RNA sequence: GGGAACGACUCGAGUAGAGUCGAAAAGGCAACAGCGUGGUGCGCAGAAUAUGAUGAAUGGGGCAACCUGCUGAGUGAUGAGAACCCGCAUCAUCUGCAGCAGCUCAUUCGCCUGCCGGGUCAGCAACACUCACUGCGUAUUCGUACGCAGUGAGUGAAAAGAAACAACAACAACAAC
Reactivity to 2A3 in 0.01 (KOAc 150mM, MgCl2 10mM, bicine 150mM(pH8.5), 24C), signal-to-noise 1, nucleotides 027 to 126: g110g000c030a040a040c010a080g030c020g060u070g020g070u020g080c060g050c030a010g130a150a110u290a160u220g140a040u130g000a050a060u060g000g000g000g000c060a090a080c010c020u000g000c020u030g000a020g030u050g020a020u020g010a000g010a080a090c000c010c030g010c000a010u020c000a000u010c030u100g050c020a030g000c010a020g000c020u000c040a040u060u010c010g030c000c020u050g090c020c020g040g050g000u100c020a020g010c010a050a020
Reactivity to DMS in 0.01 (KOAc 150mM, MgCl2 10mM, bicine 150mM(pH8.5), 24C), signal-to-noise 3, nucleotides 027 to 126: g000g020c050a050a080c090a090g010c060g020u000g010g000u030g010c090g030c010a070g020a140a100u000a090u000g020a100u010g010a020a020u010g010g000g000g010c080a090a130c300c030u000g000c000u000g000a100g000u000g000a010u000g000a110g000a080a150c000c030c020g000c060a050u000c000a010u010c050u010g000c010a030g010c000a040g000c030u000c020a020u000u000c020g010c070c040u000g010c050c040g000g000g010u000c030a060g000c120a080a200
Overview:
An RNA of 177 nucleotides, treated with 2A3 and DMS and read out base by base. In probing experiments dimethyl sulfate is read out at A N1 and C N3, which are open when not base-paired. The data come from the RNA Mapping Database (RMDB), library OK2TRN. The 2A3 profile rests on 2,139 reads.